[RMDB]
Source: RMDB library RFM100, as collected in RNAgym. An RNA of 177 nucleotides, treated with 2A3 and DMS and read out base by base. The 2A3 profile rests on 1,838 reads. High DMS reactivity at an A or C suggests that its Watson-Crick edge is free. Reactivities are given for positions 27 through 126. Conditions: 150 mM KOAc, 10 mM MgCl2 and 150 mM bicine (pH 8.5), 24 C.
RNA sequence: GGGAACGACUCGAGUAGAGUCGAAAAAAAGAGAGUCAAAGAGUGCUUGAAAUUGCCGGGAGGGAAGCGGAUGGGGGCUGGCGAUGCGCCCCGGUCGUAUGCGGAACGGCUUCUGCUGGUCCGCCGAGGAACCAUAUGGGUUCGCCCAUAUGGUUCCAAAAGAAACAACAACAACAAC
Reactivity to 2A3 in 0.01 (KOAc 150mM, MgCl2 10mM, bicine 150mM(pH8.5), 24C), signal-to-noise 3, nucleotides 027 to 126: a020a000a000g140a000g000a010g030u100c020a050a100a000g040a020g030u090g010c020u070u100g060a100a180a200u180u120g060c060c000g000g000g050a050g020g020g010a020a030g000c000g090g010a060u090g070g030g050g010g000c020u020g050g040c040g040a040u070g020c050g020c030c010c000c000g040g010u050c040g000u070a090u220g030c010g000g000a030a010c000g020g010c000u070u020c080u300g000c000u000g000g000u010c000c000g030c030c000g030a050
Reactivity to DMS in 0.01 (KOAc 150mM, MgCl2 10mM, bicine 150mM(pH8.5), 24C), signal-to-noise 1, nucleotides 027 to 126: a040a010a030g000a080g010a060g000u000c080a080a090a060g010a080g030u050g030c040u000u000g000a040a040a030u020u000g010c040c060g010g000g070a130g000g000g000a000a030g010c080g010g010a050u010g000g000g000g000g000c080u010g040g000c020g010a070u030g040c030g010c080c020c000c000g010g030u000c050g010u000a020u050g000c000g050g000a030a030c020g000g010c000u020u030c250u060g000c010u010g000g010u000c000c000g000c010c050g000a140